[RMDB]
RNA sequence: GGGAACGACUCGAGUAGAGUCGAAAAAGCAUGUUAGGUUCGCAUGGUGCACUAUUGUGUUAUUAGUAACUAAGUAAGCUUACAAUCGAAAAUGUUUAACCAUAAAAGGGUAAAGUGGUGUAAGACAGAUACCCUCUGAGCUUCGGCUCAGAGGGAACGCUUGUAUAAUCUUCGGAUUAUACAAGCGAAAAGAAACAACAACAACAAC
Reactivity to DMS in 0.01 (KOAc 150mM, MgCl2 10mM, bicine 150mM(pH8.5), 24C), signal-to-noise 3, nucleotides 027 to 156: a060g010c030a030u010g000u000u000a090g020g010u000u000c060g030c040a070u000g020g030u010g010c100a040c050u000a080u000u010g040u010g020u000u010a070u010u010a070g020u010a070a100c050u010a070a130g000u010a060a150g020c030u000u000a020c040a050a100u000c040g000a080a060a070a080u000g010u010u010u000a100a090c040c020a100u000a060a070a090a120g020g020g020u000a030a060a130g030u000g000g020u000g000u000a030a080g000a100c050a120g020a110u000a090c000c000c000u010c000u000g000a010g000c020u000u010c300g040g020c000u000c000a030g010a020g060g000g000a010a000
Reactivity to 2A3 in 0.01 (KOAc 150mM, MgCl2 10mM, bicine 150mM(pH8.5), 24C), signal-to-noise 5, nucleotides 027 to 156: a000g050c050a030u060g010u080u070a040g020g060u040u080c040g000c050a040u050g040g020u050g030c020a010c030u140a150u170u160g030u010g020u050u050a050u030u030a050g060u060a040a020c020u010a060a060g110u030a090a010g070c020u040u050a040c040a060a100u060c050g100a110a060a020a020u030g030u030u090u070a040a020c010c000a010u110a110a130a020a010g060g040g010u050a050a050a030g030u020g040g000u010g020u040a030a010g020a020c030a010g070a050u130a130c000c000c000u020c000u000g000a000g000c010u030u140c250g050g000c000u000c000a000g000a000g000g000g000a000a000